[RMDB]
RNA sequence: GGGAACGACUCGAGUAGAGUCGAAAAAAAAGGACUUAAGGUAAAGCAGAGCACUUUGCAGAUGUUUUUGAGAGAAGCUGCCGGGGCCGCGGCCGCGGUCUGGGCAUGAGGAUGGCGGUGGGCUCAGCGAAUAUCAGGGAUUCGUCCCUGAUAUUCGAAAAGAAACAACAACAACAAC
Reactivity to 2A3 in 0.01 (KOAc 150mM, MgCl2 10mM, bicine 150mM(pH8.5), 24C), signal-to-noise 1, nucleotides 027 to 126: a000a000a020a030g060g010a050c020u070u040a050a020g010g000u000a010a090a080g000c030a060g050a030g090c040a020c060u080u130u110g020c050a030g000a180u030g040u020u070u060u080u050g150a120g000a010g020a080a000g000c030u010g000c020c030g010g000g000g040c030c010g000c000g110g120c180c190g000c000g000g000u030c020u030g020g040g010c030a010u080g030a010g050g050a070u070g040g030c030g070g020u060g030g040g010c030u000c050a050g090
Reactivity to DMS in 0.01 (KOAc 150mM, MgCl2 10mM, bicine 150mM(pH8.5), 24C), signal-to-noise 3, nucleotides 027 to 126: a060a030a050a040g000g000a080c040u000u010a080a100g000g010u000a040a040a040g000c030a090g010a130g010c060a080c060u000u000u000g000c030a090g000a080u000g000u000u000u000u000u020g010a120g010a130g000a070a070g020c100u000g000c020c020g000g010g010g010c010c020g010c030g000g010c290c160g010c010g000g000u000c020u000g010g000g010c020a020u000g010a080g010g010a090u000g000g020c080g010g010u000g010g000g010c040u000c050a110g000

The record gives the reactivity of an RNA of 177 nucleotides to 2A3 and DMS. For 2A3 the reverse transcriptase was SuperScript II with manganese.